This 207-nucleotide RNA was probed chemically with 2A3.
The data come from the RNA Mapping Database (RMDB), library M2RFPK.
2A3 is a SHAPE reagent: it acylates the 2'-hydroxyl of flexible nucleotides of all four kinds.
Conditions: 150 mM KOAc, 10 mM MgCl2 and 150 mM bicine (pH 8.5), 24 C.
For 2A3 the reverse transcriptase was SuperScript II with manganese.

[RMDB]
RNA sequence: GGGAACGACUCGAGUAGAGUCGAAAAUUACCGCCCAGGAUGCGGUGCAGCGUUCCUGCAAUAUCCAGGGCACCUAGGUGCAGCCUUGUAGUUUUAGUGGACUUUAGGCUAAAGAAUUUCACUAGCAAAAAUCUUUAAGGGUUCGCCCUUAAAGAAAGAAAGUACAUUGCUUCGGCAAUGUACUUUCAAAAGAAACAACAACAACAAC
Reactivity to 2A3 in 0.01 (KOAc 150mM, MgCl2 10mM, bicine 150mM(pH8.5), 24C), signal-to-noise 1, nucleotides 027 to 156: u080u030a110c020c050g030c020c000c000a020g000g000a020u050g070c170g070g100u050g000c010a010g010c040g050u070u100c000c010u000g040c010a000a040u040a040u120c030c020a030g000g040g010c000a040c010c020u050a070g070g070u060g010c000a010g040c020c000u030u060g090u150a010g040u000u070u040u030a040g010u050g000g010a000c000u050u010u020a000g000g030c000u050a050a130a020g120a030a060u110u260u220c010a000c000u040a030g000c090a030a090a090a110a200u010c000u000u000u000a000a010g000g000g030u040u150c130g150c030c000c000u000u000a000a000a000g010a000a000a010